[RMDB]
RNA sequence: GGGAACGACUCGAGUAGAGUCGAAAAAUCAAAAUUUAACUGCUGAACCGCAGUACUCCCUCGCGGCUUAAGUGCCGAGAGCCGUUCUGGCAGCUUCGCCUGAGAGGUGCUAGUCCGGACGCAAGUCAGGCUCGCGGGAACUCGAGGAGAGGGGACAGAUUUUUGAGAUGUUCGCAUCUCAAAAAUCAAAAGAAACAACAACAACAAC
Reactivity to 2A3 in 0.01 (KOAc 150mM, MgCl2 10mM, bicine 150mM(pH8.5), 24C), signal-to-noise 1, nucleotides 027 to 156: a000u110c080a100a050a030a030u100u180u150a070a100c010u000g010c010u080g110a140a030c040c110g000c000a020g000u020a060c030u040c010c020c000u000c000g050c040g100g000c050u060u060a080a000g050u050g100c020c000g010a020g000a010g020c000c000g000u080u000c030u000g000g010c000a020g050c010u090u090c070g040c030c050u110g070a080g010a020g100g010u030g000c000u020a010g010u090c050c050g020g020a020c020g000c030a040a070g120u070c010a000g020g000c010u010c030g020c000g050g000g000a160a050c000u010c060g010a050g040g040a210g000a000g050g000g000g000a010c010a070

Chemical mapping of a 207-nucleotide RNA with 2A3. It was measured as part of the RMDB library RSTRND. Values cover nucleotides 27 to 156.